[RMDB]
RNA sequence: GGGAACGACUCGAGUAGAGUCGAAAAUCGAUCAGGCGCACGAUCAUAGCGCAGGCCCUGGCCGAUCUGCGCCGCAGUGGAUCAGCGCUGGCCGAUCGAUCAGUACCAGGUACACUGGCCAGCGAUCCAAGAUGAGACAUUUCGAUGUCUCAUCUUGAAAAGAAACAACAACAACAAC
Reactivity to DMS in 0.01 (KOAc 150mM, MgCl2 10mM, bicine 150mM(pH8.5), 24C), signal-to-noise 9, nucleotides 027 to 126: u000c020g000a020u000c020a170g020g010c010g010c010a040c240g010a010u000c020a170u010a110g010c120g020c080a080g000g010c060c040c050u010g010g010c030c060g000a030u000c020u000g000c010g030c010c030g010c130a060g010u010g010g010a040u000c060a190g010c050g010c010u000g000g010c030c020g000a020u000c030g000a020u010c090a100g010u000a180c030c040a100g000g010u000a120c170a100c110u010g010g000c010c000a020g010c050g000a060u000c040
Reactivity to 2A3 in 0.01 (KOAc 150mM, MgCl2 10mM, bicine 150mM(pH8.5), 24C), signal-to-noise 8, nucleotides 027 to 126: u050c010g010a020u040c030a050g020g000c010g010c030a030c180g020a010u020c030a090u180a080g120c140g010c070a020g080g040c010c020c080u100g070g000c020c030g000a020u000c000u010g000c010g000c020c020g000c000a020g050u110g070g030a050u040c040a040g080c010g000c040u010g020g000c000c020g020a050u050c020g010a020u020c020a010g030u030a060c020c030a030g060g110u090a060c090a030c130u080g010g000c000c000a010g010c010g010a000u020c010

Notes
Structure probing data (DMS and 2A3) for a 177-nucleotide construct. For DMS the reverse transcriptase was MarathonRT. For DMS, 28,733 sequencing reads were counted. The reactions ran in a buffer of 150 mM KOAc, 10 mM MgCl2 and 150 mM bicine (pH 8.5), at 24 C. High DMS reactivity at an A or C suggests that its Watson-Crick edge is free.